[RMDB]
RNA sequence: GGGAACGACUCGAGUAGAGUCGAAAACUGUCAUACUACAAUCUGCAGGAUUAUGUGUUGUUUGUGGUUCACAGACUGUAUUGCGUUGUGGUGAUUGUUUGCGUAGACCACUUUUAUGUACAAAGUGUGCUUAUGAUCAUGUUAUCGCAACACCACAAGAAGAGUCCAAAUUCGUUUGGACUCUUCUAAAAGAAACAACAACAACAAC
Reactivity to 2A3 in 0.01 (KOAc 150mM, MgCl2 10mM, bicine 150mM(pH8.5), 24C), signal-to-noise 3, nucleotides 027 to 156: c010u050g070u110c030a100u140a140c030u020a020c090a060a060u050c030u080g000c030a050g040g190a220u110u130a110u300g060u000g020u050u080g030u020u060u080g000u020g040g000u100u110c080a040c010a060g080a140c060u110g090u120a130u040u260g040c030g030u030u010g040u030g060g030u010g040a140u030u050g070u020u060u070g000c040g000u080a060g020a160c020c010a000c000u010u010u000u030a260u240g130u040a030c120a040a030a020g000u050g030u050g040c010u090u070a060u130g070a080u070c070a020u080g190u250u110a050u130c000g000c000a000a000c000a020c030c000a010c000a020
Reactivity to DMS in 0.01 (KOAc 150mM, MgCl2 10mM, bicine 150mM(pH8.5), 24C), signal-to-noise 1, nucleotides 027 to 156: c050u000g030u000c130a160u000a120c020u010a030c020a050a000u010c030u000g010c010a110g000g030a160u010u000a060u000g000u000g030u000u000g030u020u000u020g050u000g050g030u000u010c040a060c010a040g000a050c020u010g000u010a050u010u000g030c060g050u010u000g040u010g020g030u000g020a100u010u000g010u000u000u000g020c090g030u000a050g000a000c000c010a040c010u000u000u020u000a120u020g050u020a090c240a020a030a030g020u000g010u010g030c010u010u000a010u000g010a140u000c010a000u010g000u000u000a050u000c050g010c030a030a100c010a030c000c050a030c100a100
Notes
Structure probing data (2A3 and DMS) for a 207-nucleotide construct. The data come from the RNA Mapping Database (RMDB), library OK3TST. For 2A3, 1,199 sequencing reads were counted.